[RMDB]
Background:
Chemical mapping of a 207-nucleotide RNA with DMS and 2A3. For DMS the reverse transcriptase was MarathonRT. It was measured as part of the RMDB library OK3TST. The RNA was probed in 150 mM KOAc, 10 mM MgCl2 and 150 mM bicine (pH 8.5) at 24 C.
RNA sequence: GGGAACGACUCGAGUAGAGUCGAAAAAUCAUGCAAACAACAAGACAGAUGGCGUUACGGUUGGCAGCUAUGCCUGUUCGUGGACGACGAGCGGAGAUCGACGGCAGACCGCCAUCCAUCCCGUCAUGGUUAGACGUUCGGUCUCCGAGACCUUCGAAUAUUGGGUGGGAUUCGUCCCACCCAAUAUAAAAGAAACAACAACAACAAC
Reactivity to DMS in 0.01 (KOAc 150mM, MgCl2 10mM, bicine 150mM(pH8.5), 24C), signal-to-noise 1, nucleotides 027 to 156: a080u030c090a130u020g000c080a040a080a120c040a100a180c030a070a020g030a140c030a120g000a000u000g010g030c010g010u000u030a100c130g000g020u020u000g010g000c040a170g040c080u000a100u000g000c000c020u010g000u040u010c070g020u000g020g040a100c070g030a100c030g010a120g010c010g000g010a080g010a010u010c020g070a070c030g010g000c050a300g010a110c030c060g050c050c010a050u000c000c050a140u000c020c030c260g000u030c050a010u000g010g000u000u000a100g020a040c040g010u000u020c010g100g010u010c000u020c010c020g000a070g010a110c060c020u010u000c020g040a160
Reactivity to 2A3 in 0.01 (KOAc 150mM, MgCl2 10mM, bicine 150mM(pH8.5), 24C), signal-to-noise 1, nucleotides 027 to 156: a000u080c050a050u050g060c020a050a150a120c040a080a020c030a120a090g070a080c030a030g020a080u050g050g000c000g030u050u130a030c060g040g000u060u010g060g000c000a030g010c050u280a120u220g000c020c020u020g080u090u150c000g000u070g060g070a030c020g000a040c020g000a020g160c030g000g000a030g000a030u000c000g020a030c000g010g000c010a000g040a100c010c010g000c010c000a000u010c020c000a040u060c040c030c000g060u130c010a080u080g000g000u020u010a100g000a140c050g070u180u090c010g080g000u000c010u000c000c000g000a000g020a000c000c070u000u000c000g070a040